[RMDB]
RNA sequence: GGGAACGACUCGAGUAGAGUCGAAAAGAUAUGGACUACAGUAGGGAGCAACGUUCGGAAACGAACGAAUUGCGAGGAUCUACGUAGUCCUAAGUCAAAUCUUGGUUAUUGUUCGCAAUAACCAAGACGGAUCGAUUAAGUUCGCUUAAUCGAUCCGAAAAGAAACAACAACAACAAC
Reactivity to DMS in 0.01 (KOAc 150mM, MgCl2 10mM, bicine 150mM(pH8.5), 24C), signal-to-noise 1, nucleotides 027 to 126: g010a010u010a080u000g010g010a000c010u000a020c010a140g000u000a010g030g000g010a100g010c000a030a020c020g000u000u000c000g000g000a010a000a060c010g030a000a000c010g020a090a130u030u000g000c000g010a110g010g000a050u000c010u000a000c020g020u000a010g000u000c000c000u000a000a060g000u000c000a150a120a150u000c000u000u000g000g000u000u000a000u000u000g000u000u000c300g050c010a000a010u000a000a000c020c000a000a000g000a040
Reactivity to 2A3 in 0.01 (KOAc 150mM, MgCl2 10mM, bicine 150mM(pH8.5), 24C), signal-to-noise 2, nucleotides 027 to 126: g020a010u020a000u050g000g020a000c000u010a000c110a150g020u030a010g050g070g070a130g000c020a000a040c000g030u000u000c000g010g010a030a010a000c010g010a000a000c030g050a130a170u080u020g000c020g100a280g050g180a120u000c010u010a010c010g010u000a000g000u000c010c000u000a000a000g000u000c010a000a000a300u000c000u000u020g020g000u010u000a020u020u010g090u010u160c300g020c140a010a000u000a020a020c000c000a000a000g000a030
About this RNA:
Structure probing data (DMS and 2A3) for a 177-nucleotide construct. The RNA was probed in 150 mM KOAc, 10 mM MgCl2 and 150 mM bicine (pH 8.5) at 24 C. It was measured as part of the RMDB library TTRDES.